[RMDB]
RNA sequence: GGGAACGACUCGAGUAGAGUCGAAAAGAAAGAAAGAAGAAUCACCAGGAGGCAAGGAUCCUCAACUACGUUAUUCGGGCAGCUUGAGUUGAGAGGAGCUAGUGGUGCGCCCGGCCUGGAGAUCAAAACACGACAGGCGGGUUCGCCCGCCUGUCAAGGCUUGUAUAUUGUUCGCAAUAUACAAGCCAAAAGAAACAACAACAACAAC
Reactivity to 2A3 in 0.01 (KOAc 150mM, MgCl2 10mM, bicine 150mM(pH8.5), 24C), signal-to-noise 2, nucleotides 027 to 156: g080a020a100a030g080a020a090a040g050a050a020g040a040a090u040c010a000c010c010a000g000g010a050g010g010c030a050a210g050g000a010u010c010c010u000c010a010a010c020u300a060c070g030u090u020a030u060u060c000g000g020g000c000a030g020c090u230u300g050a020g010u030u000g000a000g010a020g020g000a010g000c030u050a030g100u030g180g040u110g020c030g000c000c000c000g010g000c000c010u000g000g030a020g000a030u030c030a020a050a000a150c090a040c120g010a000c000a010g000g010c050g010g010g010u060u020c030g050c040c000c000g020c060c020u000g000u000c000a000a010

The record gives the reactivity of an RNA of 207 nucleotides to 2A3. The 2A3 profile rests on 1,091 reads. 2A3 adducts were read by reverse transcription with SuperScript II with manganese.